RNA sequence: GGGAACGACUCGAGUAGAGUCGAAAAACAACAGAUAGCUGGAACCAGCGUAGAAUUCUACGCAUAUCCAUAGCGAAUGGUACCUGUAAAGAAAAUAAGGAUGGAUGUACAAGUACCAACAGCCGUUCAUGCCAUGGUGAUGUCAAUCACAUAUGCAUAUGGACCAUGAUUUCGAUCAUGGUCCAUAAAAAGAAACAACAACAACAAC
Reactivity to DMS in 0.01 (KOAc 150mM, MgCl2 10mM, bicine 150mM(pH8.5), 24C), signal-to-noise 1, nucleotides 027 to 156: a000c040a100a100c060a150g000a110u000a020g000c060u000g010g010a080a130c290c070a070g000c000g020u000a060g000a210a300u000u000c010u010a010c000g020c000a270u000a080u000c060c100a100u000a070g000c000g010a130a300u000g000g000u000a010c010c050u000g010u020a040a130a070g000a190a040a140a110u000a200a020g070g000a120u000g040g020a190u000g000u000a050c000a010a020g040u000a020c020c000a020a070c120a010g010c010c020g020u000u000c040a130u040g000c010c150a080u000g050g020u030g020a050u000g000u010c140a100a060u000c070a010c060a180u000a120u000g040c040a300
Reactivity to 2A3 in 0.01 (KOAc 150mM, MgCl2 10mM, bicine 150mM(pH8.5), 24C), signal-to-noise 3, nucleotides 027 to 156: a000c040a000a030c050a040g100a130u190a060g010c060u030g010g030a090a110c100c040a040g000c030g000u000a000g030a140a300u300u200c010u020a010c000g010c010a000u020a020u010c010c000a000u080a020g000c000g070a080a030u050g000g000u010a010c010c000u030g000u070a120a120a020g130a070a150a030a050u170a120a060g130g010a090u080g020g080a050u050g000u010a010c000a020a000g040u000a030c000c000a040a080c020a000g000c020c060g060u080u060c040a070u100g030c030c000a060u100g000g040u010g050a000u070g180u190c030a090a080u040c000a000c010a050u120a010u100g010c030a010